[RMDB]
RNA sequence: GGGAACGACUCGAGUAGAGUCGAAAAACGGAUAGAUUCGUCUAUCCGUGCAUCUCAAAACAGACAGAGAAAGUCUGCUAAGAUCUCACUUAGAUAAAGAGAAGAGAGUCGAGUUCGCUCGACUCAACCGCAGAACGUAAUUCGUUACGUUCUGCGGAAAAGAAACAACAACAACAAC
Reactivity to DMS in 0.01 (KOAc 150mM, MgCl2 10mM, bicine 150mM(pH8.5), 24C), signal-to-noise 1, nucleotides 027 to 126: a010c000g000g010a000u000a000g000a020u000u030c090g000u000c020u000a000u020c010c000g000u020g020c170a120u000c000u000c000a140a070a260a150c020a020g000a030c000a000g000a090g000a170a120a060g010u000c000u010g000c060u000a030a020g000a030u000c000u030c050a100c020u000u020a010g000a120u010a080a000a120g030a070g000a050a150g000a090g010a010g000u010c000g000a080g010u000u010c300g000c010u000c000g000a000c000u020c010a030a020
Reactivity to 2A3 in 0.01 (KOAc 150mM, MgCl2 10mM, bicine 150mM(pH8.5), 24C), signal-to-noise 1, nucleotides 027 to 126: a000c000g010g000a010u010a000g000a000u000u050c150g010u030c100u010a000u000c000c000g000u020g000c020a150u040c010u030c000a060a050a060a030c000a010g020a000c020a000g170a000g070a250a100a080g030u040c020u050g000c010u000a000a010g010a090u020c020u010c020a060c070u020u040a010g020a110u120a280a070a040g070a020g000a100a120g090a010g000a000g000u000c000g000a000g030u040u060c180g000c030u010c000g010a010c010u000c000a000a000
An RNA of 177 nucleotides, treated with DMS and 2A3 and read out base by base. For 2A3 the reverse transcriptase was SuperScript II with manganese. The DMS profile rests on 634 reads. The 2A3 profile rests on 1,029 reads.